[RMDB]
RNA sequence: GGGAACGACUCGAGUAGAGUCGAAAAUUGGAACUGUAAUGUACCAAAAUAUCCUAAUAAUGCAAUUGUAUGCAGGUUUGACACACGUGUGCAUUCUGAGUUCAAUUUGCCAGGUUGUGAUGGCGGUGGGGCCGCGGCUUCGGCCGCGGCAAAAGAAACAACAACAACAAC
Reactivity to 2A3 in 0.01 (KOAc 150mM, MgCl2 10mM, bicine 150mM(pH8.5), 24C), signal-to-noise 1, nucleotides 027 to 129: u000u070g120g000a080a030c000u040g000u180a020a010u210g060u000a000c000c000a000a220a000a000u000a190u070c000c000u060a000a000u140a150a090u040g000c050a000a050u000u280g030u030a040u020g060c170a010g010g160u000u000u110g000a020c000a000c000a000c110g090u070g180u140g130c000a000u030u020c000u090g180a140g000u000u000c000a000a030u000u110u080g000c030c000a050g040g000u000u000g070u020g000a030u050g000g060c070g060g000u160g000g170g000
Reactivity to DMS in 0.01 (KOAc 150mM, MgCl2 10mM, bicine 150mM(pH8.5), 24C), signal-to-noise 1, nucleotides 027 to 129: u020u110g000g080a000a050c020u060g000u210a000a080u090g000u000a020c000c000a100a160a000a210u090a000u000c000c070u000a040a090u190a250a090u000g000c110a030a030u130u000g080u050a030u020g050c110a000g000g050u000u050u000g020a260c140a040c000a100c120g000u030g000u000g000c050a000u000u000c000u010g000a140g000u020u020c080a090a010u000u000u030g070c010c070a050g000g040u020u020g040u060g000a000u050g000g110c080g000g060u060g000g000g080